[RMDB]
RNA sequence: GGGAACGACUCGAGUAGAGUCGAAAAUUCGCGUGAUUCGUCACGCGAAGAUUACCGAGAACCGUGCUCGGUAUUAACAUGGAACCCUUGGAAACAAGGGAAAUAGGCAGGCCUUCGGGCCUGCCAAACAUACGAACGUCUUCGGACGUUCGUAUGUAAAAGAAACAACAACAACAAC
Reactivity to DMS in 0.01 (KOAc 150mM, MgCl2 10mM, bicine 150mM(pH8.5), 24C), signal-to-noise 2, nucleotides 027 to 126: u000u010c010g030c000g020u000g020a030u000u040c160g000u020c000a010c000g010c010g000a010a000g010a160u000u000a050c020c000g000a010g000a150a200c110c100g000u000g080c010u000c020g000g010u000a010u010u000a090a070c180a040u020g030g000a120a240c010c010c000u000u000g000g000a180a150a180c000a000a020g000g000g020a000a020a050u000a120g010g010c000a010g000g000c000c000u000u010c190g030g020g030c000c000u000g000c020c000a000a020